[RMDB]
RNA sequence: GGGAACGACUCGAGUAGAGUCGAAAAGAUAUGGACCGUUGUAGACAUGCUCGAGUCGGAAACGACGAGAGCAACAGCUACACCGGUCCUAAGUCAAAACUACGUCUGUGUUCGCACAGACGUAGAACUAUCCCAGCGUGUUCGCACGCUGGGAUAGAAAAGAAACAACAACAACAAC
Reactivity to 2A3 in 0.01 (KOAc 150mM, MgCl2 10mM, bicine 150mM(pH8.5), 24C), signal-to-noise 1, nucleotides 027 to 126: g000a000u030a020u060g000g010a000c020c010g000u020u010g000u010a050g070a170c090a300u120g000c020u000c000g000a030g010u030c000g000g000a030a010a010c000g000a010c020g000a010g000a000g040c020a010a040c000a000g000c020u000a000c020a000c020c010g000g010u000c000c000u010a000a000g010u010c000a000a010a090a150c010u010a010c000g010u000c080u000g030u010g070u100u120c300g070c080a000c000a000g010a030c020g000u000a000g020a000a010
Reactivity to DMS in 0.01 (KOAc 150mM, MgCl2 10mM, bicine 150mM(pH8.5), 24C), signal-to-noise 2, nucleotides 027 to 126: g000a060u000a210u020g000g000a020c000c000g010u000u000g000u000a000g040a140c150a170u000g030c010u000c000g000a300g010u000c000g010g000a050a100a070c000g000a020c010g000a300g000a020g000c030a010a020c300a100g010c020u000a000c000a010c030c000g010g010u000c000c000u020a000a010g000u020c020a080a090a100a110c000u000a000c000g010u000c010u000g010u000g000u010u000c250g000c020a010c000a030g000a010c000g000u000a000g000a020a180
The record gives the reactivity of an RNA of 177 nucleotides to 2A3 and DMS.
The reactions ran in a buffer of 150 mM KOAc, 10 mM MgCl2 and 150 mM bicine (pH 8.5), at 24 C.
The 2A3 profile rests on 3,035 reads.